About this RNA
The record gives the reactivity of an RNA of 177 nucleotides to DMS and 2A3. For 2A3 the reverse transcriptase was SuperScript II with manganese. Reactivities are given for positions 27 through 126. It was measured as part of the RMDB library OK2TRN.

[RMDB]
RNA sequence: GGGAACGACUCGAGUAGAGUCGAAAACGUCUGCAGGCAUUCCACAGCACCAGCGAAACACACAUCACGUCGCAUGCUUUGGCUGUGGGUAUGGUGUCGUGAAUGCAGCCGGCAUUAUUUUGCCCGAACUAGCUCCUGACUUCGGUCAGGAGCUAGUAAAAGAAACAACAACAACAAC
Reactivity to DMS in 0.01 (KOAc 150mM, MgCl2 10mM, bicine 150mM(pH8.5), 24C), signal-to-noise 1, nucleotides 027 to 126: c070g020u030c020u000g020c010a220g040g010c000a070u000u010c120c060a030c020a100g000c010a060c070c070a070g030c110g030a110a160a130c140a060c150a100c050a060u010c100a130c170g020u000c100g000c170a120u000g000c090u000u020u020g050g010c070u010g020u000g000g000g000u010a070u000g000g020u000g010u010c030g010u000g000a100a040u000g000c010a060g000c010c020g020g000c030a070u010u000a120u000u000u000u000g000c000c000c000g010a150
Reactivity to 2A3 in 0.01 (KOAc 150mM, MgCl2 10mM, bicine 150mM(pH8.5), 24C), signal-to-noise 1, nucleotides 027 to 126: c010g000u030c000u000g020c020a100g090g000c000a040u100u000c080c000a000c000a020g000c010a000c010c010a000g060c030g080a060a210a030c070a000c020a000c000a080u060c020a020c090g140u100c060g030c070a130u300g060c100u110u130u220g110g000c000u000g000u060g010g000g000u020a050u090g030g020u030g000u060c060g000u110g150a110a040u020g000c000a020g020c000c010g030g000c020a020u010u070a120u070u300u090u170g080c020c000c010g010a030